[RMDB]
RNA sequence: GGGAACGACUCGAGUAGAGUCGAAAAUCUCCAGAGGGGAUUAGUCACAUUGCUUCAAAGUUAACAAAAACAAAGAGAGCAGAGGCAGCUUCACUGGGAACAACACCCGUCCAUCAAUGAGGAUGAGCCAGAGUAUAAGUUUCGACUUAUACUCUGGAAAAGAAACAACAACAACAAC
Reactivity to 2A3 in 0.01 (KOAc 150mM, MgCl2 10mM, bicine 150mM(pH8.5), 24C), signal-to-noise 9, nucleotides 027 to 126: u020c020u000c000c000a010g030a070g060g040g020g020a120u110u070a100g040u020c020a060c020a150u080u110g000c010u050u050c020a090a090a060g020u050u070a130a120c090a100a130a070a010a000c030a020a190a010g110a030g000a010g010c010a010g000a040g030g000c010a020g010c010u020u020c010a030c030u020g000g020g030a030a040c040a060a010c020a050c020c010c000g030u040c020c000a080u090c020a100a190u240g050a070g120g010a010u030g000a010g040
Reactivity to DMS in 0.01 (KOAc 150mM, MgCl2 10mM, bicine 150mM(pH8.5), 24C), signal-to-noise 6, nucleotides 027 to 126: u020c030u030c010c030a060g010a100g010g000g020g000a040u010u020a090g020u020c000a070c100a170u030u000g020c010u000u000c050a040a160a130g000u010u020a070a090c280a080a080a070a040a040c030a050a110a120g000a140g000a020g030c010a020g010a070g010g000c020a040g010c040u000u000c030a040c000u000g020g000g000a060a060c110a060a120c130a080c010c010c010g010u020c060c000a070u010c070a060a110u020g000a080g020g000a010u000g010a120g010